[RMDB]
The data come from the RNA Mapping Database (RMDB), library OK2TST. Structure probing data (2A3 and DMS) for a 177-nucleotide construct. The DMS profile rests on 43,481 reads.
RNA sequence: GGGAACGACUCGAGUAGAGUCGAAAAGGGUCGCUUGGUCAGUCUGGAACUUAAGUGAAGGUCACCUGCACAGCGAGCAGUUACGGGCCGCGCUGUAGCGGCGGUGCAACUUCGACGAGGGUGACGACUAAUAUACCGGUUUCGACCGGUAUAUUAGAAAAGAAACAACAACAACAAC
Reactivity to 2A3 in 0.01 (KOAc 150mM, MgCl2 10mM, bicine 150mM(pH8.5), 24C), signal-to-noise 8, nucleotides 027 to 126: g040g010g010u050c020g000c050u040u060g030g010u040c030a020g030u000c050u090g040g040a080a080c030u100u100a190a060g050u040g140a050a020g070g000u020c000a000c010c010u040g010c070a040c020a050g040c020g020a020g010c060a000g020u080u080a040c050g040g060g000c010c020g030c010g000c080u190g060u150a050g010c020g030g000c040g020g030u020g000c020a040a050c010u040u030c020g070a070c020g010a070g000g030g000u020g010a010c020g010a010
Reactivity to DMS in 0.01 (KOAc 150mM, MgCl2 10mM, bicine 150mM(pH8.5), 24C), signal-to-noise 9, nucleotides 027 to 126: g010g010g020u000c030g010c040u000u000g010g010u000c050a080g010u000c050u000g010g010a120a070c080u010u010a070a150g020u000g010a100a080g010g000u000c000a020c020c000u010g000c070a080c080a100g010c020g000a140g010c120a040g010u000u010a070c150g000g000g010c010c020g010c020g020c160u010g010u010a100g010c020g000g010c050g010g020u000g000c060a040a040c030u000u000c020g000a070c080g010a240g000g000g000u000g000a040c040g010a190
Conditions: 150 mM KOAc, 10 mM MgCl2 and 150 mM bicine (pH 8.5), 24 C.